[RMDB]
Annotation:
This 177-nucleotide RNA was probed chemically with DMS and 2A3.

RNA sequence: GGGAACGACUCGAGUAGAGUCGAAAAAUAAAAUGCUGUGAGUACAGUGGAAAUAUAAGAUCUAUUCUGGGCUUGCUGCUCUGGUAAAUAGGUUGCCUUGGCAGGAUGCUACAUAUUAGGCUGGGGGCCGAAAUAGAGGAUUCGUCCUCUAUUUCGGAAAAGAAACAACAACAACAAC
Reactivity to DMS in 0.01 (KOAc 150mM, MgCl2 10mM, bicine 150mM(pH8.5), 24C), signal-to-noise 3, nucleotides 027 to 126: a080u020a070a090a080a120u000g010c000u000g010u010g010a150g020u020a050c040a010g020u010g000g000a090a070a090u030a080u010a080a040g010a080u000c030u000a040u000u000c080u010g000g010g000c010u000u000g010c030u000g010c020u000c060u000g010g020u010a010a040a180u010a080g010g030u000u000g000c010c020u000u000g010g000c010a040g000g010a060u010g010c010u000a050c050a050u000a070u000u000a010g010g000c030u000g010g000g000g000g000
Reactivity to 2A3 in 0.01 (KOAc 150mM, MgCl2 10mM, bicine 150mM(pH8.5), 24C), signal-to-noise 2, nucleotides 027 to 126: a000u150a010a020a030a050u070g020c010u040g030u030g140a090g180u200a030c010a000g040u070g040g090a060a150a010u240a010u050a100a040g030a120u020c000u010a060u100u090c030u020g040g000g000c020u030u110g040c010u050g000c010u000c020u000g030g050u060a050a080a090u180a150g240g000u020u060g050c000c010u030u050g020g000c010a010g030g050a020u040g010c020u020a130c000a020u170a030u090u070a000g020g000c010u010g020g000g000g010g000

Description:
The RNA was probed in 150 mM KOAc, 10 mM MgCl2 and 150 mM bicine (pH 8.5) at 24 C. For DMS the reverse transcriptase was MarathonRT. 2A3 adducts were read by reverse transcription with SuperScript II with manganese.